[RMDB]
RNA sequence: GGGAACGACUCGAGUAGAGUCGAAAAAAAGAUAUGGAAUAUACUACUGUAUGAACUACGCUCUGAUCAGAUCGGAAACGAUCUGCGUAGAGCGCAUACAAGAAUUUUGUAUAUUCCUAAGUCAAAAGGUAAUUAUGGAGUUCGCUCCAUAAUUACCAAAAGAAACAACAACAACAAC
Reactivity to 2A3 in 0.01 (KOAc 150mM, MgCl2 10mM, bicine 150mM(pH8.5), 24C), signal-to-noise 1, nucleotides 027 to 126: a010a020a020g090a050u110a040u090g020g000a000a000u020a000u000a020c000u000a020c030u070g030u020a010u020g010a090a030c110u090a050c300g000c010u000c020u010g060a080u190c000a010g000a020u000c000g000g020a000a060a060c000g020a010u020c000u000g020c000g030u050a010g010a000g000c020g020c020a000u030a000c000a010a140g160a230a170u160u300u080u150g000u000a020u000a000u000u070c010c000u000a080a000g010u000c040a000a070a070a180
Reactivity to DMS in 0.01 (KOAc 150mM, MgCl2 10mM, bicine 150mM(pH8.5), 24C), signal-to-noise 2, nucleotides 027 to 126: a110a150a120g010a050u000a300u010g020g010a030a000u000a000u000a000c010u000a180c190u010g030u000a000u000g010a150a110c190u020a300c070g000c000u000c000u030g000a080u020c020a020g000a010u000c020g000g000a070a100a220c000g000a000u000c010u010g010c230g030u000a010g000a030g000c010g020c010a000u000a010c000a050a060g020a140a130u000u010u020u010g000u000a000u000a000u000u000c000c010u000a100a100g000u000c030a070a050a170a070